[RMDB]
RNA sequence: GGGAACGACUCGAGUAGAGUCGAAAAGCGGCUUAGCUGCGUGCGGCCCCAGGUCAGUCAACGCAGCCUCUGCACCUCGCCGGUCAGGUACGCAGGCCGCGCCGGGCUGCCCCAGACCUGCGGCGCACACGGGAGGCUCAGCCUGGAAUGCCGUCCAAAUAAUUUACCGGUUCGCCGGUAAAUUAUUAAAAGAAACAACAACAACAAC
Reactivity to 2A3 in 0.01 (KOAc 150mM, MgCl2 10mM, bicine 150mM(pH8.5), 24C), signal-to-noise 1, nucleotides 027 to 156: g060c000g040g000c030u060u060a030g010c010u070g010c030g020u020g000c030g120g300c020c000c010c000a000g000g000u010c010a010g040u110c060a060a020c220g020c030a050g040c000c000u080c010u060g040c010a050c000c010u020c030g000c040c010g050g080u100c030a050g050g050u060a110c120g020c060a040g000g060c070c050g020c060g000c030c030g000g010g010c000u020g010c010c050c040c000a000g000a010c000c000u020g040c070g000g000c080g010c000a000c010a030c050g050g010g060a040g030g000c010u020c040a000g020c000c000u010g000g060a080a060u150g030c000c030g080u040c020c020a040